[RMDB]
RNA sequence: GGGAACGACUCGAGUAGAGUCGAAAAGAUAUGGAGCAUUGUGCAAGCUGUGGAUCGGAAACGAUCCAUACAGUGAUGACCACACUGCUCCUAAGUCAAAACAGACGGCAGUUCGCUGCCGUCUGAACUCUACACACUUCUUCGGAAGUGUGUAGAGAAAAGAAACAACAACAACAAC
Reactivity to 2A3 in 0.01 (KOAc 150mM, MgCl2 10mM, bicine 150mM(pH8.5), 24C), signal-to-noise 1, nucleotides 027 to 126: g000a010u030a000u060g000g000a010g000c010a010u010u010g000u020g040c080a180a240g000c000u020g000u020g060g010a000u000c000g000g010a000a000a000c000g000a000u000c000c000a000u060a000c000a000g010u020g160a300u040g000a010c000c010a000c000a010c030u010g010c010u000c010c000u000a000a000g000u000c020a030a050a090a120c000a010g000a000c000g000g040c010a020g030u080u150c290g140c180u000g000c000c000g000u000c000u010g000a000a000
Reactivity to DMS in 0.01 (KOAc 150mM, MgCl2 10mM, bicine 150mM(pH8.5), 24C), signal-to-noise 2, nucleotides 027 to 126: g020a000u000a000u030g000g010a000g020c010a020u000u000g000u000g000c010a040a040g010c000u000g020u000g000g000a020u010c010g010g010a010a000a010c020g000a010u000c000c000a000u010a040c300a030g070u000g010a070u010g000a040c300c000a000c010a010c110u000g030c000u010c000c000u000a010a080g000u000c010a100a060a120a300c010a010g010a000c000g000g040c000a000g030u010u010c260g000c000u000g000c000c050g010u010c000u000g000a010a150